[RMDB]
This 177-nucleotide RNA was probed chemically with DMS and 2A3. Reactivities are given for positions 27 through 126. The RNA was probed in 150 mM KOAc, 10 mM MgCl2 and 150 mM bicine (pH 8.5) at 24 C. It was measured as part of the RMDB library OK1LIB. The 2A3 profile rests on 4,276 reads.
RNA sequence: GGGAACGACUCGAGUAGAGUCGAAAAGCAGAGACACCAGUCACAGACACUAGAACUCACGCUACGUCAGGUCGGAUGUGACAGCGCGAAAGCGAGCGCAAGCUUUAGCGUUACGUACGAGUGGCGAAAUUAUAUAAAUAUUCGUAUUUAUAUAAUUAAAAGAAACAACAACAACAAC
Reactivity to DMS in 0.01 (KOAc 150mM, MgCl2 10mM, bicine 150mM(pH8.5), 24C), signal-to-noise 4, nucleotides 027 to 126: g010c070a060g010a100g000a070c060a040c060c050a080g020u000c030a040c070a060g000a110c070a060c060u020a070g000a100a060c040u010c020a090c100g010c060u010a060c060g000u000c030a040g000g020u000c050g020g000a080u000g010u010g000a070c040a080g020c020g000c020g000a060a040a030g000c010g000a080g020c100g010c150a080a150g010c010u010u010u030a120g000c000g020u000u020a060c110g000u020a050c080g000a050g020u010g010g010c020g000a080
Reactivity to 2A3 in 0.01 (KOAc 150mM, MgCl2 10mM, bicine 150mM(pH8.5), 24C), signal-to-noise 5, nucleotides 027 to 126: g040c050a020g030a010g020a070c010a030c040c040a030g010u030c010a010c020a090g100a050c020a040c100u100a060g040a180a020c010u020c050a050c060g020c030u120a030c040g050u020c030a020g060g100u040c010g040g020a050u080g010u020g040a030c020a020g000c000g010c010g060a040a020a000g020c030g040a050g100c110g010c120a080a040g000c000u030u040u050a020g010c000g020u030u060a010c020g010u030a020c040g030a030g050u030g020g000c010g020a050